[RMDB]
Structure probing data (DMS and 2A3) for a 177-nucleotide construct. It was measured as part of the RMDB library OK2TST. The reactions ran in a buffer of 150 mM KOAc, 10 mM MgCl2 and 150 mM bicine (pH 8.5), at 24 C. 2A3 adducts were read by reverse transcription with SuperScript II with manganese. Values cover nucleotides 27 to 126.
RNA sequence: GGGAACGACUCGAGUAGAGUCGAAAAUGACCGCUCGGCAGACACCUCCUGUUGGCCCUGCCCCACCUGGCUGGCCCUGCUGCCCGGGCAGAAAUAAUGGUGAGGAUGACAAUAGCCACAGUCGUCAGUUACACUCGUACUUCGGUACGAGUGUAACAAAAGAAACAACAACAACAAC
Reactivity to DMS in 0.01 (KOAc 150mM, MgCl2 10mM, bicine 150mM(pH8.5), 24C), signal-to-noise 2, nucleotides 027 to 126: u000g030a110c030c090g020c120u010c070g000g010c050a040g010a080c100a090c090c020u010c050c020u020g010u010u000g010g000c220c030c110u000g000c020c010c050c040a030c090c030u010g000g010c020u020g010g040c030c040c040u020g100c000u000g000c070c020c090g010g000g000c000a050g020a070a100a140u000a050a030u010g000g010u020g000a150g020g000a050u000g010a090c050a060a120u010a120g010c040c040a060c150a070g010u010c120g000u020c030a090
Reactivity to 2A3 in 0.01 (KOAc 150mM, MgCl2 10mM, bicine 150mM(pH8.5), 24C), signal-to-noise 1, nucleotides 027 to 126: u040g020a000c030c030g040c030u040c020g030g000c050a050g000a070c050a070c040c020u010c000c010u020g050u030u050g010g000c060c000c000u030g060c000c020c000c020a080c020c020u060g040g000c020u010g030g030c010c010c030u080g000c000u010g000c020c020c000g030g020g000c030a000g030a020a080a020u260a040a000u060g010g020u100g050a060g040g010a060u090g020a050c040a180a200u050a060g040c010c010a050c040a060g050u030c010g020u000c010a040